RNA sequence: GGGAACGACUCGAGUAGAGUCGAAAAGAGUCCACACGGUAAGCGCCUCUGGCCCGAGGCCGCUCGUCGGGAAUCGGACACUGGAACUAGUACUCUGGUCAAUGCGGAUUGCCUGUGGCGGUGUUGGCAAACUAGAGCUUUUCGAAGCUCUAGUUUGAAAAGAAACAACAACAACAAC
Reactivity to DMS in 0.01 (KOAc 150mM, MgCl2 10mM, bicine 150mM(pH8.5), 24C), signal-to-noise 4, nucleotides 027 to 126: g010a120g030u010c000c010a060c040a060c120g020g010u000a050a050g010c030g020c010c010u000c050u010g010g020c020c020c050g010a020g000g010c060c030g010c030u010c130g000u010c030g010g000g020a100a110u020c110g010g010a080c050a050c020u000g000g010a090a100c090u010a040g010u010a110c090u000c010u000g000g000u000c020a060a060u010g010c020g010g000a120u000u000g000c010c000u000g000u000g000g010c050g000g010u000g000u010u000g010g010
Reactivity to 2A3 in 0.01 (KOAc 150mM, MgCl2 10mM, bicine 150mM(pH8.5), 24C), signal-to-noise 5, nucleotides 027 to 126: g050a010g040u050c000c000a010c000a000c070g010g000u040a030a020g030c000g000c000c010u040c060u050g020g020c000c010c030g000a010g040g030c050c020g000c010u090c040g170u090c020g030g010g050a060a170u170c050g080g030a030c040a040c100u080g100g040a120a020c010u010a030g030u090a070c000u000c010u040g010g010u020c020a070a080u120g000c010g050g110a290u010u040g010c000c000u020g000u020g020g000c000g020g030u040g030u020u040g040g000
About this RNA:
Structure probing data (DMS and 2A3) for a 177-nucleotide construct. Values cover nucleotides 27 to 126. It was measured as part of the RMDB libraries RFM100 and RFMREP. The reactions ran in a buffer of 150 mM KOAc, 10 mM MgCl2 and 150 mM bicine (pH 8.5), at 24 C. DMS adducts were read by reverse transcription with MarathonRT.